[RMDB]
RNA sequence: GGGAACGACUCGAGUAGAGUCGAAAACAGCAAAAAGGAACCGACUCCCACCAAGUUCGGAAAGAGAUACCGGGCGAGGCGCUGAAGAAAGAAUCUCGCUUCAGACACCCCAAGGACUCGACUGAAGAAUGCACGCCAUCGUUCGCGAUGGCGUGAAGUAACAGUACGGGUUCGCCCGUACUGUUACAAAAGAAACAACAACAACAAC
Reactivity to 2A3 in 0.01 (KOAc 150mM, MgCl2 10mM, bicine 150mM(pH8.5), 24C), signal-to-noise 1, nucleotides 027 to 156: c010a000g070c010a000a100a070a070a050g060g000a030a100c030c080g050a030c000u010c000c020c000a050c040c080a080a000g030u140u000c010g050g030a140a040a000g050a000g010a020u080a050c000c000g030g020g030c130g030a080g040g030c160g000c070u180g020a080a050g020a000a250a000g060a090a140u110c100u070c150g100c030u000u000c000a010g000a060c010a080c000c060c000c040a090a010g000g000a020c000u000c010g020a060c010u090g000a030a000g110a170a180u130g040c000a000c000g000c000c000a000u000c000g000u040u040c150g010c000g110a020u020g000g000c000g000u000g000a000a000